[RMDB]
This 207-nucleotide RNA was probed chemically with DMS. It was measured as part of the RMDB library M2RFPK. Conditions: 150 mM KOAc, 10 mM MgCl2 and 150 mM bicine (pH 8.5), 24 C.
RNA sequence: GGGAACGACUCGAGUAGAGUCGAAAAGGCUAUGACUCGUGUCCGUCGGCGUCGCCGACAACAUGCCCAGGUAGCCCAGACCUUCAAGGCUACGGUGCGUUGCGACGCACGGUCUGAUUCUUCACAAAGUAGUCCCGAGUCUUCGGACUCGGGACAAUCCUGAAAUAAAGUUCGCUUUAUUUCAGGAAAAAGAAACAACAACAACAAC
Reactivity to DMS in 0.01 (KOAc 150mM, MgCl2 10mM, bicine 150mM(pH8.5), 24C), signal-to-noise 1, nucleotides 027 to 156: g010g000c010u000a040u000g010a060c040u010c040g030u000g000u010c000c060g030u000c010g010g010c030g050u010c130g020c000c010g030a110c040a060a030c070a080u010g030c000c010c070a150g010g010u000a010g000c030c010c210a130g010a100c050c030u020u010c010a100a240g000g020c000u020a020c050g040g000u000g030c040g020u000u000g050c140g010a270c010g000c040a030c050g000g020u010c000u000g010a230u000u010c030u000u000c060a120c040a050a070a190g040u000a110g000u000c010c000c000g000a010g010u000c000u000u010c300g030g030a000c020u000c000g000g000g000a000c000a000a000
For DMS, 2,948 sequencing reads were counted.